An RNA of 207 nucleotides, treated with DMS and 2A3 and read out base by base. The DMS profile rests on 3,195 reads. DMS (dimethyl sulfate) methylates the pairing face of unpaired adenines and cytosines. Values cover nucleotides 27 to 156.
RNA sequence: GGGAACGACUCGAGUAGAGUCGAAAACAGCUUGCAUGGUUUUCAGCUGCGUCCCCACGUUAUUGGAUAGGGCCGUCAGAAAAUGCUUGAUCGAGUAGGGCGACUGGCUCCCAGGAUCCGGCGCUUUCCACUCCCCAAAGCCCGUCACCCUAGUUGACUAGCUAAAUUAGUUCGCUAAUUUAGCUAGAAAAGAAACAACAACAACAAC
Reactivity to DMS in 0.01 (KOAc 150mM, MgCl2 10mM, bicine 150mM(pH8.5), 24C), signal-to-noise 1, nucleotides 027 to 156: c000a050g000c020u000u010g030c080a120u000g020g020u010u000u000u010c040a080g040c010u000g010c000g020u010c020c000c000c040a100c280g020u000u000a070u000u030g000g000a140u010a110g000g000g020c030c060g040u010c060a080g020a050a070a100a100u000g000c050u000u010g010a100u000c000g020a140g030u020a060g020g030g040c020g000a080c060u000g000g000c010u010c030c060c070a110g000g000a060u000c040c020g020g000c090g030c070u010u010u010c020c000a150c040u000c010c000c010c050a080a090a120g020c010c010c040g040u000c000a010c000c010c000u000a110g010u000u000g010a250
Reactivity to 2A3 in 0.01 (KOAc 150mM, MgCl2 10mM, bicine 150mM(pH8.5), 24C), signal-to-noise 2, nucleotides 027 to 156: c010a000g020c020u050u070g000c070a140u070g130g100u110u070u160u170c030a020g030c010u040g010c000g020u040c000c000c010c000a050c010g130u120u120a100u140u190g070g000a120u080a140g010g030g020c000c020g050u060c010a000g080a050a170a030a020u060g020c020u080u150g050a080u150c040g010a000g140u050a060g020g000g000c020g030a040c010u030g000g000c040u060c030c010c030a010g060g000a010u060c050c060g030g000c090g040c060u030u070u020c070c000a060c040u070c000c000c010c020a010a130a000g010c020c000c000g000u000c010a070c010c000c000u020a010g100u040u040g000a040